[RMDB]
RNA sequence: GGGAACGACUCGAGUAGAGUCGAAAACAUUAGUUCUUCGGAACUAAUGAAAUACGCCGUUUGCCUAGGCUAUAGGCUAAAUUAUGAAAGAAUAAACAAAUAAAACACUGGGGUUCGCCCCAGUGAACCUAUUGCAUUACUUCGGUAAUGCAAUAGGAAAAGAAACAACAACAACAAC
Reactivity to 2A3 in 0.01 (KOAc 150mM, MgCl2 10mM, bicine 150mM(pH8.5), 24C), signal-to-noise 1, nucleotides 027 to 126: c010a000u000u010a000g000u010u000c020u020u040c190g070g000a000a010c000u020a000a000u000g030a040a000a000u160a040c120g010c010c010g010u010u060u010g010c000c000u010a010g000g050c150u140a060u020a120g000g000c000u040a040a040a090u230u230a150u220g070a080a080a100g080a120a150u190a160a130a030c040a050a090a050u140a060a110a030a000c000a000c000u010g000g000g000g090u060u060c220g120c000c000c000c000a000g000u010g000a010a000
Reactivity to DMS in 0.01 (KOAc 150mM, MgCl2 10mM, bicine 150mM(pH8.5), 24C), signal-to-noise 2, nucleotides 027 to 126: c010a000u000u000a000g000u000u000c000u000u000c200g080g000a000a010c000u000a000a000u000g000a070a080a060u010a150c230g020c040c010g000u000u020u000g000c000c000u000a010g000g000c030u030a110u000a000g000g010c000u000a060a090a110u000u010a020u020g010a140a120a070g000a070a110u000a050a050a120c060a030a070a130u000a060a080a060a150c010a000c000u000g000g000g000g000u000u040c210g020c020c000c000c000a010g000u000g020a020a040